[RMDB]
RNA sequence: GGGAACGACUCGAGUAGAGUCGAAAAGCUAAAGACUUCGGUCUUUAGCAAAUAAAUUCAGGUGAUUUGCUACCUUUAAGUGCAGCUAGAAAUUCAAAAAUUAAACAACGAGGUUCGCCUCGUUGAACAUACGCUUCAGGUUCGCCUGAAGCGUAUGAAAAGAAACAACAACAACAAC
Reactivity to 2A3 in 0.01 (KOAc 150mM, MgCl2 10mM, bicine 150mM(pH8.5), 24C), signal-to-noise 2, nucleotides 027 to 126: g010c000u000a000a000a000g030a000c000u000u080c180g090g000u000c000u020u000u010a010g000c000a020a000a000u050a000a020a020u140u060c070a000g000g030u040g060a300u110u000u170g030c000u020a040c000c000u080u190u250a020a010g000u000g000c010a000g000c020u080a050g100a160a120a030u180u120c080a050a050a090a130a110u080u170a170a060a050c000a010a000c000g010a000g000g000u010u040c050g070c040c000u000c000g010u000u010g000a000a000
Reactivity to DMS in 0.01 (KOAc 150mM, MgCl2 10mM, bicine 150mM(pH8.5), 24C), signal-to-noise 1, nucleotides 027 to 126: g000c000u010a000a020a020g010a020c000u010u010c270g020g010u000c000u000u000u000a010g010c000a010a030a010u000a030a130a120u040u000c070a020g000g020u000g000a120u010u010u010g010c000u000a060c010c000u000u010u010a000a040g000u000g010c000a000g000c300u000a120g000a020a140a120u010u000c140a040a070a110a020a100u020u000a080a070a180c000a010a000c030g010a010g040g020u000u010c240g000c000c000u000c000g000u000u000g030a070a210